[RMDB]
RNA sequence: GGGAACGACUCGAGUAGAGUCGAAAACCACCUUAGUGGAGUCCGCCCCGGUGCAUCUCUCCGCUGCAGCCCCGCCGACUUGCAGUCCUUCUCCUGCUGGGGCGAUCGGCUCAGAUGCGGCCAGUUCCUGUUCAGCGGAUUUCGAUCCGCUGAACAGAAAAGAAACAACAACAACAAC
Reactivity to DMS in 0.01 (KOAc 150mM, MgCl2 10mM, bicine 150mM(pH8.5), 24C), signal-to-noise 1, nucleotides 027 to 126: c030c010a110c090c210u020u010a140g040u010g000g000a070g000u000c080c120g000c170c010c030c030g010g030u040g020c030a070u000c030u000c060u000c030c050g030c050u000g010c160a130g000c020c000c050c050g040c080c080g010a070c020u020u000g040c030a050g000u020c070c040u000u000c050u010c060c000u010g010c000u000g020g020g000g000c020g000a080u000c030g010g000c000u010c000a060g010a130u030g040c020g000g010c040c030a110g000u000u000c020
An RNA of 177 nucleotides, treated with DMS and read out base by base. DMS (dimethyl sulfate) methylates the pairing face of unpaired adenines and cytosines. Reactivities are rounded to 0.1 and cut off at 0 and 3. The data come from the RNA Mapping Database (RMDB), library OK2TRN.